This 207-nucleotide RNA was probed chemically with 2A3 and DMS. Conditions: 150 mM KOAc, 10 mM MgCl2 and 150 mM bicine (pH 8.5), 24 C. For 2A3 the reverse transcriptase was SuperScript II with manganese. For 2A3, 1,275 sequencing reads were counted. Source: RMDB library OK3TST, as collected in RNAgym.

RNA sequence: GGGAACGACUCGAGUAGAGUCGAAAAUCAGGUAGCUUGAAAAGCACUGUGUUGGAGGAUACGGGCCCUGCCUAGCAGCUCACAGUCCAAGAUGGAAAACUCCUCUGGCCUUUCCACACUGGGGAGCAGCCUGCAGGCCUGCCUUCCACAAAUGCCAAAAUGCGUAGGAUUUCGAUCCUACGCAUUUAAAAGAAACAACAACAACAAC
Reactivity to 2A3 in 0.01 (KOAc 150mM, MgCl2 10mM, bicine 150mM(pH8.5), 24C), signal-to-noise 2, nucleotides 027 to 156: u090c030a020g130g110u190a050g080c040u080u150g110a160a170a040a130g000c010a030c020u030g010u010g050u130u100g000g020a010g000g010a060u070a300c080g000g000g040c130c020c020u000g000c010c010u030a030g000c000a000g000c000u000c000a010c010a010g000u080c080c030a010a040g040a300u030g020g000a000a000a040a060c060u060c030c040u150c110u060g040g050c010c010u000u000u000c000c000a020c020a000c000u010g060g000g070g000a010g000c000a000g010c000c030u020g030c000a000g010g000c000c000u030g030c000c000u020u000c000c000a010c000a000a090a030u140g020c000c030a040
Reactivity to DMS in 0.01 (KOAc 150mM, MgCl2 10mM, bicine 150mM(pH8.5), 24C), signal-to-noise 1, nucleotides 027 to 156: u030c010a050g000g000u000a100g020c000u000u000g000a070a120a210a120g000c000a070c000u000g030u000g050u000u000g040g000a030g000g010a170u000a050c040g000g000g010c050c020c070u010g000c080c060u000a070g010c030a120g020c020u000c000a050c060a040g000u000c130c020a090a070g000a180u000g010g010a040a030a040a090c030u000c080c090u000c100u000g000g000c160c030u000u000u000c000c000a100c070a060c020u000g000g030g010g020a040g090c020a100g030c070c000u010g020c020a050g020g030c050c000u000g010c010c010u000u020c020c010a050c010a020a050a070u000g030c020c020a050